Chemical mapping of a 207-nucleotide RNA with DMS and 2A3. Reactivities are given for positions 27 through 156. For 2A3 the reverse transcriptase was SuperScript II with manganese. The RNA was probed in 150 mM KOAc, 10 mM MgCl2 and 150 mM bicine (pH 8.5) at 24 C. It was measured as part of the RMDB library OK3TST. The 2A3 profile rests on 2,868 reads.
[RMDB]
RNA sequence: GGGAACGACUCGAGUAGAGUCGAAAAUGGCUCGCCACCCUUCUGGCACCGGCGGCAGAUCCUGAUGUUACGCAUGAUCAUGGAGGGCCAGUACCAGUUCAGUUCCCCCGAGUGGGAUGACCGUUCCAGCACUGUCAAAGACCUGGUGAGCGGGGGAAAUAAAAUGAUAGUUCGCUAUCAUUUUAUUAAAAGAAACAACAACAACAAC
Reactivity to DMS in 0.01 (KOAc 150mM, MgCl2 10mM, bicine 150mM(pH8.5), 24C), signal-to-noise 4, nucleotides 027 to 156: u010g020g040c010u000c030g000c020c010a070c020c020c050u010u000c030u000g030g010c020a080c020c040g010g030c030g030g030c030a130g010a090u000c030c030u020g000a080u010g030u000u000a230c150g000c100a120u000g000a090u010c040a130u010g000g010a080g030g020g000c010c000a050g020u000a040c010c010a180g010u000u000c060a110g010u010u000c020c000c000c020c030g000a130g020u000g010g010g010a120u010g000a080c040c060g020u010u000c020c030a100g010c050a110c040u000g010u000c050a070a090a130g010a120c060c030u010g020g000u000g010a090g000c020g020g010g040g060g000a060
Reactivity to 2A3 in 0.01 (KOAc 150mM, MgCl2 10mM, bicine 150mM(pH8.5), 24C), signal-to-noise 4, nucleotides 027 to 156: u070g020g010c020u030c040g020c010c010a040c020c040c000u040u100c030u060g020g000c050a060c150c020g080g000c050g010g010c020a020g020a090u050c010c030u100g050a060u050g090u190u140a090c120g000c030a030u130g020a080u110c030a070u160g080g000a020g010g010g000c010c000a000g000u020a050c000c030a020g020u060u110c020a040g010u060u030c000c010c010c000c010g020a040g070u150g020g010g020a030u070g010a020c000c040g030u090u030c070c010a030g030c060a030c030u010g000u050c030a030a060a060g050a100c010c010u020g020g020u050g030a030g030c010g000g000g020g000g000a010